About this RNA: Chemical mapping of a 207-nucleotide RNA with 2A3 and DMS. For DMS the reverse transcriptase was MarathonRT.

[RMDB]
RNA sequence: GGGAACGACUCGAGUAGAGUCGAAAAGCGUACUACACUCGUUUGACGUAUGCUGGAGGCUAUAUGUACAGGAUAGGCUGCUCCCAAAUAGGAGCAGCCCUUAUAGCCGUUGAAAGCAUACCGAGAGUGUAUCGCAAAACCAACCUUCGGGUUGGAACCUUGUAAUGACCUUCGGGUCAUUACAAGGAAAAGAAACAACAACAACAAC
Reactivity to 2A3 in 0.01 (KOAc 150mM, MgCl2 10mM, bicine 150mM(pH8.5), 24C), signal-to-noise 4, nucleotides 027 to 156: g000c000g070u070a100c050u030a000c020a010c000u020c030g280u080u140u300g130a100c060g000u000a000u000g000c000u030g000g040a020g000g000c010u020a020u010a010u090g080u080a140c140a200g220g110a220u170a130g010g000c000u000g000c010u040c000c050c000a120a170a080u300a110g000g000a000g000c000a000g000c020c000c000u010u000a010u000a000g000c000c000g000u020u000g000a000a000a010g000c010a000u000a000c000c010g020a030g000a000g050u010g010u000a010u090c000g000c000a000a010a010a090c000c000a000a000c000c000u030u020c200g100g000g000u010u000g000g000a000a010
Reactivity to DMS in 0.01 (KOAc 150mM, MgCl2 10mM, bicine 150mM(pH8.5), 24C), signal-to-noise 2, nucleotides 027 to 156: g020c020g010u010a060c080u000a030c000a020c000u000c010g030u000u020u010g030a160c120g030u000a010u000g000c000u000g000g000a280g010g030c000u000a020u000a060u010g020u000a300c210a230g010g000a170u000a030g000g000c010u000g010c000u010c010c010c000a050a130a230u000a040g010g010a030g040c000a000g020c000c000c010u020u000a020u000a000g020c010c020g000u000u010g010a260a150a100g000c020a020u000a010c000c000g000a100g000a050g000u000g010u000a010u000c000g060c040a090a060a060a110c010c000a020a010c000c010u000u030c300g050g020g040u000u010g000g000a020a040
Description
It was measured as part of the RMDB library RNAMAK.